[RMDB]
RNA sequence: GGGAACGACUCGAGUAGAGUCGAAAAUACUUAGUACGCGCGUAGUUGCAGGCAUUCCGGGUGCAACAACUGACGCGGAAGACUUUUCCCAGAGUGUGCGCUUCAACUGGCGUGCUGAGUAGUGCACGAAUUGCACGUACGUUCGCGUACGUGCAAAACCUAAGAAUUCCUUCGGGAAUUCUUAGGUAAAAGAAACAACAACAACAAC
Reactivity to DMS in 0.01 (KOAc 150mM, MgCl2 10mM, bicine 150mM(pH8.5), 24C), signal-to-noise 2, nucleotides 027 to 156: u000a050c040u000u030a070g020u000a050c000g030c020g020c030g040u000a060g000u000u010g000c030a090g020g010c010a060u000u060c000c300g050g000g080u000g000c000a300a060c000a010a050c020u000g000a050c060g000c030g000g000a080a180g000a120c140u000u000u000u000c030c000c000a250g000a170g000u000g040u000g020c010g010c020u010u000c040a110a110c060u010g010g010c020g040u000g070c020u010g000a060g020u000a080g030u000g000c010a110c050g010a080a200u010u000g000c000a010c000g010u000a020c000g010u000u040c300g020c010g070u000a000c000g040u000g000c000a000a000a090
Reactivity to 2A3 in 0.01 (KOAc 150mM, MgCl2 10mM, bicine 150mM(pH8.5), 24C), signal-to-noise 2, nucleotides 027 to 156: u090a000c010u020u020a000g010u020a000c000g010c010g010c020g050u040a000g000u000u010g010c070a140g070g000c020a050u070u080c140c140g180g090g000u060g010c030a080a030c010a010a020c090u160g070a050c010g000c030g060g010a010a020g210a080c030u140u130u100u040c010c000c000a010g010a010g030u100g000u020g000c020g020c030u010u060c060a240a200c120u050g020g010c010g000u000g020c000u000g000a000g000u040a030g010u030g000c010a010c040g040a070a090u080u030g000c000a000c000g000u000a000c000g000u000u050c110g010c000g110u000a000c000g000u000g000c000a000a000a000